The record gives the reactivity of an RNA of 177 nucleotides to DMS and 2A3. DMS adducts were read by reverse transcription with MarathonRT. The reactions ran in a buffer of 150 mM KOAc, 10 mM MgCl2 and 150 mM bicine (pH 8.5), at 24 C. Reactivities are rounded to 0.1 and cut off at 0 and 3. It was measured as part of the RMDB libraries RFM100 and RFMREP.
RNA sequence: GGGAACGACUCGAGUAGAGUCGAAAAUACUGCGAUGGAGGGACGGAGAAGUGAAAGCAACACGUACGGACAGAAGUGUACGUCUAAGUGCGUAGGUAUUGGAACUGUAGGCAAAUCCGCAGAUCUAGUCGAUAUAUUCAUUCGUGAAUAUAUCGACAAAAGAAACAACAACAACAAC
Reactivity to DMS in 0.01 (KOAc 150mM, MgCl2 10mM, bicine 150mM(pH8.5), 24C), signal-to-noise 9, nucleotides 027 to 126: u030a100c070u010g010c050g010a080u010g010g000a080g010g000g010a070c070g010g010a070g000a090a080g010u010g010a080a080a100g010c070a070a070c110a040c050g010u010a030c030g000g000a060c080a070g010a070a110g010u010g020u010a040c070g010u000c040u010a070a090g020u010g000c020g020u000a040g010g000u010a060u010u010g000g010a050a050c040u010g010u000a060g010g000c100a040a060a100u020c040c030g000c060a040g000a080u010c050u010a130
Reactivity to 2A3 in 0.01 (KOAc 150mM, MgCl2 10mM, bicine 150mM(pH8.5), 24C), signal-to-noise 9, nucleotides 027 to 126: u110a010c020u030g020c030g040a040u070g030g020a040g010g020g020a020c040g040g030a060g020a110a030g040u080g080a110a040a020g050c020a030a040c020a000c050g040u060a010c010g030g070a010c020a060g140a160a030g130u100g030u130a050c040g020u000c020u090a170a050g020u030g030c020g010u030a040g040g030u070a090u090u120g020g020a040a030c020u020g020u050a080g050g000c030a040a030a060u060c010c010g000c030a010g000a060u010c020u040a030